[RMDB]
RNA sequence: GGGAACGACUCGAGUAGAGUCGAAAAGAUAUGGAGUCGUCAGCACUAUUCUGUUGUCAGAACGAAUCAUCGGAAACGAUGACUAGUUCUUGGAUUUACAGAGAUAGUGCUGACGACUCCUAAGUCACAAUUUCAGAAUGUUCGCAUUCUGAAAUUGAAAAGAAACAACAACAACAAC
Reactivity to DMS in 0.01 (KOAc 150mM, MgCl2 10mM, bicine 150mM(pH8.5), 24C), signal-to-noise 4, nucleotides 027 to 126: g010a050u000a300u000g000g010a010g000u000c000g010u000c000a010g000c000a010c000u020a000u000u000c000u000g000u010u000g010u000c020a010g010a010a000c000g010a120a200u010c000a000u000c000g000g000a200a140a280c010g010a010u010g000a020c020u000a300g000u000u000c000u010u010g030g020a020u000u010u000a020c010a010g010a040g010a020u000a000g000u000g000c000u000g000a000c010g000a000c000u000c000c000u000a010a040g000u010c040a300
About this RNA:
Conditions: 150 mM KOAc, 10 mM MgCl2 and 150 mM bicine (pH 8.5), 24 C. This 177-nucleotide RNA was probed chemically with DMS.